[RMDB]
RNA sequence: GGGAACGACUCGAGUAGAGUCGAAAAGUCGUUAGCCCCUCGGGGUGAUGGCGAGGGGUCGAUGAGCUGAGCCUGGGUUUUUAACGCGUACGCUCUCUCUUGACUGCUGCGAUAACCUCGUCGAGGCCCGGGGCUGCAUAUUCGUAUGCAGCCCCGGAAAAGAAACAACAACAACAAC
Reactivity to 2A3 in 0.01 (KOAc 150mM, MgCl2 10mM, bicine 150mM(pH8.5), 24C), signal-to-noise 2, nucleotides 027 to 126: g020u000c000g000u000u090a150g040c000c010c010c010u010c060g000g000g070g000u050g050a040u120g090g020c030g000a040g000g010g100g000u080c010g030a030u190g000a000g010c260u040g000a020g050c000c000u040g000g220g000u050u020u160u160u220a190a200c150g000c150g200u000a020c030g030c000u060c000u000c000u000c000u000u060g000a000c010u000g090c060u020g000c030g040a070u070a030a050c000c000u010c020g000u010c050g050a060g000g020c000